RNA sequence: GGGAACGACUCGAGUAGAGUCGAAAAGAUAUGGACCGAGUAAAUUUCAACAGCUCGGAAACGAGACAUGAAAGCUUACCGGUCCUAAGUCAAAACGAUGCCGUGAACUUCGGUUCACGGCAUCGAAGUGAUAGUAGUCGUUCGCGACUACUAUCACAAAAGAAACAACAACAACAAC
Reactivity to DMS in 0.01 (KOAc 150mM, MgCl2 10mM, bicine 150mM(pH8.5), 24C), signal-to-noise 1, nucleotides 027 to 126: g000a060u000a300u000g000g000a010c010c000g000a180g000u010a000a000a030u000u000u000c000a010a030c280a170g010c020u010c050g000g000a030a090a140c000g020a040g000a030c090a180u000g010a040a000a010g030c100u000u000a000c020c030g010g000u000c010c000u000a030a070g030u010c010a040a050a070a220c000g000a030u000g020c000c000g000u000g000a030a000c010u010u010c300g000g010u000u010c000a000c020g000g000c000a000u000c000g000a010a100